[RMDB]
RNA sequence: GGGAACGACUCGAGUAGAGUCGAAAAGUAUUUCCCAAUUAUCCCUUCCUGUCAUCAUCACCUUCUUGUCCGUGCUCAUCAGCAUCUCAGACAAGUUACUAUGCUGGGAAAAUCAGGACCUCACACUGCCUAUUAGAUCUUUCGAGAUCUAAUAGGCAAAAGAAACAACAACAACAAC
Reactivity to DMS in 0.01 (KOAc 150mM, MgCl2 10mM, bicine 150mM(pH8.5), 24C), signal-to-noise 2, nucleotides 027 to 126: g000u010a090u060u020u000c000c010c020a090a110u050u030a040u000c000c010c000u000u000c020c000u010g030u010c050a080u010c060a100u030c040a090c110c020u000u000c050u010u010g020u000c010c080g030u020g030c090u000c090a080u050c060a080g000c060a010u020c050u010c100a110g000a050c070a180a100g020u060u000a050c180u000a030u000g010c030u010g000g000g000a040a050a090a140u030c090a080g000g000a010c050c000u000c050a090c190a140c100u000
Reactivity to 2A3 in 0.01 (KOAc 150mM, MgCl2 10mM, bicine 150mM(pH8.5), 24C), signal-to-noise 6, nucleotides 027 to 126: g090u060a120u030u040u050c000c000c020a010a040u130u070a060u050c010c000c010u030u070c010c020u050g040u060c000a020u010c000a020u050c020a070c020c000u070u020c010u040u050g020u020c020c010g040u030g020c000u020c060a220u030c000a040g010c010a040u030c020u010c040a030g050a100c020a070a020g010u010u010a060c070u090a040u080g000c020u010g000g010g050a050a030a000a070u090c030a020g040g030a030c000c000u050c000a030c000a020c030u060

About this RNA
Structure probing data (DMS and 2A3) for a 177-nucleotide construct. The RNA was probed in 150 mM KOAc, 10 mM MgCl2 and 150 mM bicine (pH 8.5) at 24 C.